[RMDB]
RNA sequence: GGGAACGACUCGAGUAGAGUCGAAAAGCCGAGCAGGAUGCGGGCCAGCGCCCGGAUACCGGCUUCGGGACUGACGAAUUCCUCGAACACCGGAUCGUCGUCGGUGGCGCACUCGCCCUGCCAUUGGGCAUGCUGCUGGUUUCGACCAGCAGCAUGCAAAAGAAACAACAACAACAAC
Reactivity to DMS in 0.01 (KOAc 150mM, MgCl2 10mM, bicine 150mM(pH8.5), 24C), signal-to-noise 1, nucleotides 027 to 126: g000c020c020g000a020g040c020a000g000g000a080u000g000c010g050g000g020c120c200a220g000c000g060c020c000c000g000g010a000u010a070c050c040g000g000c300u000u000c000g000g000g000a080c120u060g000a250c300g020a120a060u000u000c000c010u040c090g000a000a020c300a300c000c020g020g000a060u000c070g000u000c000g000u000c050g000g000u000g080g000c160g000c040a180c000u010c000g060c000c000c000u000g020c000c120a080u000u000g000g010
Reactivity to 2A3 in 0.01 (KOAc 150mM, MgCl2 10mM, bicine 150mM(pH8.5), 24C), signal-to-noise 2, nucleotides 027 to 126: g110c030c010g030a020g000c000a020g010g110a050u220g000c000g010g010g030c070c210a120g020c010g010c050c000c000g040g000a010u040a090c000c000g000g000c000u020u000c000g000g040g000a030c030u110g030a020c070g070a080a160u070u030c020c000u090c040g000a000a000c010a090c050c050g020g000a090u060c110g040u020c050g090u000c070g290g080u180g010g000c000g000c000a000c030u010c000g000c000c000c000u000g000c030c000a110u010u050g090g000